[RMDB]
RNA sequence: GGGAACGACUCGAGUAGAGUCGAAAACGCAGAGGGUUCUGAUAACAAAGAACCUAGAUAGCCGCAUCGGUAUUAUAGGAUGUAGUCGGUGAGCCGGAAUGCCUGCAUCGUAAGCCUAUAAGUAAGUUUAAGUGUAAUCACUUCGGUGAUUACACAACGUUAACUUAGGGUUCGCCCUAAGUUAACGAAAAGAAACAACAACAACAAC
Reactivity to 2A3 in 0.01 (KOAc 150mM, MgCl2 10mM, bicine 150mM(pH8.5), 24C), signal-to-noise 4, nucleotides 027 to 156: c080g030c050a060g080a060g110g020g000u000u000c020u030g040a090u120a270a060c040a040a100a010g010a000a010c010c000u010a010g020a110u130a010g020c040c030g050c080a100u100c100g100g000u130a060u100u040a060u120a020g060g010a030u030g070u070a060g090u090c040g000g020u040g010a010g040c050c040g040g070a160a030u090g010c000c010u050g030c000a030u040c020g040u030a060a010g020c000c020u050a030u020a100a080g110u060a070a080g010u040u030u080a160a030g000u000g000u010a000a000u000c000a000c000u000u050c160g010g000u000g000a010u000u000a000c000a000c010a000a000
Reactivity to DMS in 0.01 (KOAc 150mM, MgCl2 10mM, bicine 150mM(pH8.5), 24C), signal-to-noise 2, nucleotides 027 to 156: c080g030c030a070g010a280g010g010g000u000u000c000u000g010a180u000a080a190c300a100a220a010g020a020a020c000c000u000a050g020a140u000a120g010c000c030g050c060a060u010c050g040g050u000a090u010u020a030u000a060g000g000a060u000g030u000a080g030u000c050g000g050u000g000a030g000c010c010g000g010a140a140u000g000c050c010u000g010c000a050u000c020g000u000a060a120g000c030c000u010a070u000a030a060g020u000a050a110g000u020u000u010a040a140g030u000g000u000a030a010u000c000a010c000u020u000c300g090g020u000g000a020u000u000a000c010a010c000a020a010